[RMDB]
RNA sequence: GGGAACGACUCGAGUAGAGUCGAAAAUUCGUUUACUGAAUCAUAUAUGUAUUCACUGCGGAUUAUUGCGUUCACGAGAACCGUAUUCCGACGAUAUUAACCUAAAAGAGUUAUCGGGACACGCUCUUAGGAGAUUAAAGGAUAAAAUAUUAUCCAAACACCUAACCGGAUUCGUCCGGUUAGGUGUAAAAGAAACAACAACAACAAC
Reactivity to 2A3 in 0.01 (KOAc 150mM, MgCl2 10mM, bicine 150mM(pH8.5), 24C), signal-to-noise 2, nucleotides 027 to 156: u030u010c000g000u000u040u160a050c020u010g040a020a000u040c060a030u150a160u300a100u300g030u140a020u010u030c010a000c140u060g020c000g000g100a010u040u060a120u030u220g050c080g030u010u040c070a020c140g130a180g010a240a000c000c000g020u020a110u030u010c020c000g020a030c020g010a030u010a050u220u150a050a040c010c000u040a160a120a000a000g060a000g040u080u010a050u100c050g000g040g000a010c040a030c040g040c000u000c020u050u030a020g030g030a070g030a040u150u100a160a140a120g050g010a000u000a010a100a060a000u200a060u150u030a000u000c000c000a040a000
An RNA of 207 nucleotides, treated with 2A3 and read out base by base. For 2A3 the reverse transcriptase was SuperScript II with manganese. Conditions: 150 mM KOAc, 10 mM MgCl2 and 150 mM bicine (pH 8.5), 24 C.